[RMDB]
RNA sequence: GGGAACGACUCGAGUAGAGUCGAAAAGCGCAUAACCGUAUCUGCCCACACGAUCUAGAGCAGAAAAUCACCGAGUUAAAAGCCAAUAAGAUCAAAGUGUUUGCCGUUGUCGGAGUCGCCGGCACCACUGCCGUGACCAGUUCGCUGGUCACGGCAGAAAAGAAACAACAACAACAAC
Reactivity to 2A3 in 0.01 (KOAc 150mM, MgCl2 10mM, bicine 150mM(pH8.5), 24C), signal-to-noise 1, nucleotides 027 to 126: g020c000g000c000a080u120a300a000c000c080g000u000a090u050c030u000g000c000c050c040a000c040a040c050g000a000u050c000u050a000g000a000g130c000a000g060a220a100a000a000u080c000a120c050c000g070a070g010u250u260a140a300a000a000g150c000c000a090a030u190a220a100g000a040u130c170a000a050a140g070u000g000u200u260u170g040c000c000g090u090u050g160u090c000g010g000a000g050u000c050g050c000c000g040g050c000a000c000c000a000

Description:
The record gives the reactivity of an RNA of 177 nucleotides to 2A3. The 2A3 profile rests on 272 reads. Conditions: 150 mM KOAc, 10 mM MgCl2 and 150 mM bicine (pH 8.5), 24 C.